[RMDB]
RNA sequence: GGGAACGACUCGAGUAGAGUCGAAAACUCAUGUACACGUAGCUUUCCGGGCACUUUUCUCCUUGAGUUGCGGUAAGGAAGUCACAAGGCCCGGAAGGGGCUCGUUGUAGGACUUCCUACCUGAUUGUAUCGUACUACCAUUCGUGGUAGUACGAUAAAAAGAAACAACAACAACAAC
Reactivity to 2A3 in 0.01 (KOAc 150mM, MgCl2 10mM, bicine 150mM(pH8.5), 24C), signal-to-noise 2, nucleotides 027 to 126: c010u030c030a050u180g040u150a020c050a010c080g030u050a020g020c020u030u030u000c020c000g000g000g040c040a150c140u070u030u050u040c030u050c010c020u090u070g040a060g070u100u120g090c030g000g010u020a060a030g010g000a040a050g010u040c010a030c010a080a060g030g000c030c010c000g000g040a040a010g040g000g010g000c030u030c030g090u030u040g000u030a040g000g100a020c000u040u040c030c010u020a040c000c030u100g100a210u090u140g080
Reactivity to DMS in 0.01 (KOAc 150mM, MgCl2 10mM, bicine 150mM(pH8.5), 24C), signal-to-noise 6, nucleotides 027 to 126: c070u000c030a090u000g010u000a040c060a050c030g010u010a050g010c020u000u000u000c030c030g010g000g020c040a100c090u000u000u000u000c050u000c020c050u000u000g020a090g010u000u000g010c120g010g000u010a030a060g010g000a020a030g000u000c030a060c060a060a060g010g000c000c000c010g010g010a020a020g020g020g010g010c020u000c060g010u010u000g030u000a080g010g000a040c040u000u000c000c000u000a030c050c040u010g010a140u000u010g010